[RMDB]
RNA sequence: GGGAACGACUCGAGUAGAGUCGAAAACGUGCUAGAUACAAUGACCUUGUCCCGCGCAUUUACCGUUGUGUCGAAAUAAGGCGUAAGCCUGUGAACCAUUAUAAGCGAUUGAUUGUGUGCUGAGUGGCUUUGCUCUUAUCUUCGGAUAAGAGCAAAGAAAAGAAACAACAACAACAAC
Reactivity to 2A3 in 0.01 (KOAc 150mM, MgCl2 10mM, bicine 150mM(pH8.5), 24C), signal-to-noise 1, nucleotides 027 to 126: c040g050u140g000c050u110a070g010a100u030a060c060a090a110u150g000a090c010c000u040u060g030u070c000c010c010g000c000g000c010a120u020u000u150a120c040c010g070u060u020g000u040g020u040c000g010a060a090a040u200a040a000g000g000c040g030u070a070a050g000c010c010u040g010u040g010a000a010c020c000a040u100u140a090u070a160a010g020c040g060a110u010u160g030a060u030u180g060u020g020u000g050c030u000g010a060g050u050g060g010
Reactivity to DMS in 0.01 (KOAc 150mM, MgCl2 10mM, bicine 150mM(pH8.5), 24C), signal-to-noise 4, nucleotides 027 to 126: c130g030u000g010c050u010a090g010a060u010a050c060a030a040u000g010a100c130c090u000u010g010u000c030c010c050g010c080g020c040a080u010u010u000a060c130c050g010u000u000g020u010g030u000c030g000a060a080a120u010a110a020g010g020c000g000u000a080a140g010c000c010u000g000u000g000a070a130c050c030a050u000u010a060u010a070a090g000c030g000a090u000u000g010a060u010u000g010u010g020u000g010c040u000g000a090g020u000g010g000